Chemical mapping of a 207-nucleotide RNA with 2A3. Values are in units of 0.01, from 0 to 300, in steps of 10.
RNA sequence: GGGAACGACUCGAGUAGAGUCGAAAAAAGCCAGCCUGUCAAAAGUGCACCUAAAAGUUCUCUUUCAGUCAUUUUCUGAGUUACUGAUAGGAACAUAGGUACUGUGUGAAUCAGAUCUGAGAGGAUUAUGAAUGUUAUAGAAUGCCUUUUGUUAGGGGAUGCCGAUCUAUUUCGAUAGAUCGGCAUCAAAAGAAACAACAACAACAAC
Reactivity to 2A3 in 0.01 (KOAc 150mM, MgCl2 10mM, bicine 150mM(pH8.5), 24C), signal-to-noise 2, nucleotides 027 to 156: a000a000g100c010c000a000g010c010c000u020g100u020c000a000a000a000a080g090u160g040c050a030c000c020u060a090a090a100a040g010u000u000c280u030c000u020u020u000c010a020g000u000c020a060u050u040u110u060c120u220g130a050g080u070u010a020c000u010g000a020u060a040g020g010a000a020c010a040u060a000g020g010u020a050c020u030g030u000g030u030g080a050a080u020c000a010g010a000u020c010u050g040a020g010a010g140g030a070u110u050a080u210g060a050a010u050g070u140u130a050u010a110g090a090a120u140g000c000c000u000u030u030u020g040u060u050a000g030g000g020